This 177-nucleotide RNA was probed chemically with 2A3 and DMS.
The DMS profile rests on 7,868 reads.
2A3 is a SHAPE reagent: it acylates the 2'-hydroxyl of flexible nucleotides of all four kinds.
It was measured as part of the RMDB library OK1LIB.
Reactivities are given for positions 27 through 126.
RNA sequence: GGGAACGACUCGAGUAGAGUCGAAAAUGCAGAGAGUCGUACGAGUUUCCGGGCCAGCCCGCCAAAUCGUUCUUGGACGACAUCCGAGUCGACGACGAAUGGAUAUUGGGAGCGGACAACGACGUACCUUAUCACAGCAGUUCGCUGCUGUGAUAAGAAAAGAAACAACAACAACAAC
Reactivity to 2A3 in 0.01 (KOAc 150mM, MgCl2 10mM, bicine 150mM(pH8.5), 24C), signal-to-noise 8, nucleotides 027 to 126: u230g000c060a040g080a010g010a020g190u110c050g010u040a020c010g010a010g030u000u050u000c020c000g000g070g050c060c040a060g020c060c010c000g000c020c000a030a040a060u030c010g010u040u010c020u040u070g050g050a080c030g030a030c080a060u040c040c040g030a040g020u060c040g040a030c020g010a010c020g020a050a040u080g050g040a070u070a130u220u210g020g000g000a030g050c000g000g000a030c070a050a000c020g160a020c010g000u020a030c000
Reactivity to DMS in 0.01 (KOAc 150mM, MgCl2 10mM, bicine 150mM(pH8.5), 24C), signal-to-noise 5, nucleotides 027 to 126: u030g020c060a050g000a230g000a090g010u010c110g010u020a030c030g010a300g030u000u010u000c000c020g010g000g010c010c030a120g040c090c000c020g000c040c010a020a080a080u000c000g000u010u010c020u010u000g000g010a140c070g010a060c050a300u020c080c120g000a130g010u020c040g000a060c010g000a040c110g000a040a080u010g010g000a040u020a120u010u000g000g020g000a100g010c000g030g010a030c150a040a040c050g000a100c050g000u010a060c040